This 177-nucleotide RNA was probed chemically with DMS and 2A3.
For 2A3, 8,308 sequencing reads were counted.
For 2A3 the reverse transcriptase was SuperScript II with manganese.
For DMS, 5,771 sequencing reads were counted.
The reactions ran in a buffer of 150 mM KOAc, 10 mM MgCl2 and 150 mM bicine (pH 8.5), at 24 C.
The data come from the RNA Mapping Database (RMDB), library TTRDEL.
RNA sequence: GGGAACGACUCGAGUAGAGUCGAAAAGAUAUGGAGCUCGUCGAUCAGCUUUGAUCUCGGAAACGAGGGAGCUGUAGAGACGAGGCUCCUAAGUCAAAAGGACUUCGACCUUCGGGUCGAAGUCCAAGUACUAUCUGAAGUUCGCUUCAGAUAGUACAAAAGAAACAACAACAACAAC
Reactivity to DMS in 0.01 (KOAc 150mM, MgCl2 10mM, bicine 150mM(pH8.5), 24C), signal-to-noise 5, nucleotides 027 to 126: g000a040u010a300u010g000g000a000g010c000u010c010g010u000c000g000a250u010c000a010g000c000u000u000u020g010a060u010c000u000c010g000g000a130a080a200c000g000a020g000g010g000a000g010c010u000g010u010a020g020a300g000a010c010g010a020g030g010c010u000c000c000u000a020a060g000u000c040a050a060a190a180g010g000a010c010u000u000c000g010a020c000c000u000u020c260g030g000g020u010c000g010a000a010g010u000c000c000a000a030
Reactivity to 2A3 in 0.01 (KOAc 150mM, MgCl2 10mM, bicine 150mM(pH8.5), 24C), signal-to-noise 4, nucleotides 027 to 126: g040a020u090a070u180g020g020a000g000c010u000c020g030u000c010g020a120u040c010a000g010c010u290u300u100g120a100u080c010u000c010g030g040a120a070a060c020g000a010g000g020g000a010g000c020u050g100u280a080g030a010g000a050c010g000a020g000g020c000u000c010c000u010a100a020g040u010c030a000a000a030a300g010g000a020c000u010u010c010g000a020c000c000u090u160c300g070g000g000u000c000g010a000a000g000u000c000c000a000a000